[RMDB]
RNA sequence: GGGAACGACUCGAGUAGAGUCGAAAAAGGGGUUCCAGUUGGGAGACACCAGGCGCACCUCUCCUGCCACCGGGUCGAACAAGCCGCCAAACACCACUGCCUUGAGCACCAAAAGCCAGGCUCCCAAAACGUAGAUGGGGUUCGCCCCAUCUACGUUAAAAGAAACAACAACAACAAC
Reactivity to 2A3 in 0.01 (KOAc 150mM, MgCl2 10mM, bicine 150mM(pH8.5), 24C), signal-to-noise 2, nucleotides 027 to 126: a000g030g000g000g010u050u050c020c010a020g060u100u000g080g040g020a050g030a060c050a040c030c010a060g060g060c020g000c010a000c010c000u000c010u030c010c020u040g010c030c000a020c020c020g030g010g020u020c010g020a090a010c050a020a100g040c030c020g090c020c000a000a060a000c030a000c010c000a060c030u040g010c000c000u050u050g060a100g050c040a090c040c040a000a060a020a040g020c000c000a010g020g010c050u050c010c010c010a050a090
Reactivity to DMS in 0.01 (KOAc 150mM, MgCl2 10mM, bicine 150mM(pH8.5), 24C), signal-to-noise 2, nucleotides 027 to 126: a050g000g040g000g000u000u020c090c040a120g000u030u010g000g000g060a120g030a060c210a010c090c020a050g020g020c060g030c060a000c080c020u030c040u000c020c010u010g030c070c020a110c080c030g040g000g000u000c070g000a140a060c150a040a130g060c020c000g000c020c020a070a050a130c040a040c050c060a020c060u050g000c000c040u050u040g000a140g060c070a120c070c000a110a070a070a060g000c040c000a000g030g000c000u000c000c000c000a060a050
The record gives the reactivity of an RNA of 177 nucleotides to 2A3 and DMS.